Source information:
The record gives the reactivity of an RNA of 177 nucleotides to DMS and 2A3. It was measured as part of the RMDB libraries RFM100 and RFMREP. The RNA was probed in 150 mM KOAc, 10 mM MgCl2 and 150 mM bicine (pH 8.5) at 24 C. For 2A3 the reverse transcriptase was SuperScript II with manganese.
RNA sequence: GGGAACGACUCGAGUAGAGUCGAAAAAACAUUGAAGAACAAGCAUGUCCUCGGCCAUUAGGCUGUUGUGGGCAGCGUCCUGUAUAUUCCUACAACUUCCCAAAGCCAAAAUGGCUCUUACUGGGGAUAACUCAAUAGACUUCGGUCUAUUGAGUUAAAAAGAAACAACAACAACAAC
Reactivity to DMS in 0.01 (KOAc 150mM, MgCl2 10mM, bicine 150mM(pH8.5), 24C), signal-to-noise 7, nucleotides 027 to 126: a060a040c140a080u020u020g000a080a070g000a090a040c070a090a100g010c080a100u010g000u000c010c010u000c020g000g000c000c010a160u020u030a160g000g010c000u000g010u020u020g020u010g000g010g000c210a020g010c100g000u000c030c030u000g000u010a060u010a110u020u010c000c010u000a020c100a060a060c110u020u010c000c000c000a060a110a030g000c020c010a060a060a090a080u020g000g010c010u010c130u020u020a070c160u010g010g020g000g010a090
Reactivity to 2A3 in 0.01 (KOAc 150mM, MgCl2 10mM, bicine 150mM(pH8.5), 24C), signal-to-noise 8, nucleotides 027 to 126: a000a000c190a100u160u170g060a110a070g060a090a040c080a100a050g060c070a100u040g010u000c000c010u010c000g000g000c030c010a070u170u180a080g010g010c020u030g040u210u100g080u090g000g020g010c010a010g010c010g030u080c000c020u020g070u010a040u010a020u080u060c000c010u050a080c030a100a040c060u070u070c010c000c000a030a050a000g010c010c000a080a070a070a200u250g020g020c010u000c020u060u080a100c100u040g000g000g000g000a010